[RMDB]
RNA sequence: GGGAACGACUCGAGUAGAGUCGAAAACGAUGGACAGUGGAGCUUCGCUCUCACCAGUCGCGUGCUGACUCUCGCGCCUACCCGAACACGGCUGUUCCGAGGGCGCCGAGGGCCGAGCUUCCCGCCGCUAGUCGAGCGGACUUCUGGUAGUUCCCCCCUUUACAUAAAGGUUCGCCUUUAUGUAAAGAAAAGAAACAACAACAACAAC
Reactivity to 2A3 in 0.01 (KOAc 150mM, MgCl2 10mM, bicine 150mM(pH8.5), 24C), signal-to-noise 5, nucleotides 027 to 156: c010g000a010u060g000g000a000c010a010g020u020g010g020a010g010c040u250u160c140g020c010u170c040u050c030a010c000c000a000g010u000c000g000c000g000u010g010c030u020g000a030c000u000c000u000c000g020c010g010c010c010u110a160c020c010c030g020a030a010c080a030c110g300g000c250u200g040u070u000c050c030g010a130g010g000g010c010g020c040c080g010a010g010g020g000c010c010g090a000g010c010u040u020c010c000c000g010c010c000g000c020u080a070g100u240c080g100a010g020c000g050g000a050c000u140u090c070u220g030g040u050a060g020u040u040c020c010c010c000c000
Reactivity to DMS in 0.01 (KOAc 150mM, MgCl2 10mM, bicine 150mM(pH8.5), 24C), signal-to-noise 2, nucleotides 027 to 156: c000g010a040u000g000g010a040c030a100g020u010g020g000a050g010c030u020u000c200g030c010u000c020u000c030a040c040c000a100g000u000c000g000c020g010u000g020c050u010g010a020c000u000c000u000c000g020c020g000c010c010u000a200c140c070c040g000a050a060c040a100c070g020g000c260u000g020u000u010c020c040g000a300g010g010g010c050g050c020c030g030a030g020g000g040c000c010g040a080g010c040u000u000c010c010c020g020c020c020g020c030u000a140g020u000c110g020a190g000c040g020g000a060c060u000u010c050u010g000g020u010a130g010u000u000c000c000c000c060c100
An RNA of 207 nucleotides, treated with 2A3 and DMS and read out base by base. The 2A3 profile rests on 6,267 reads. For 2A3 the reverse transcriptase was SuperScript II with manganese.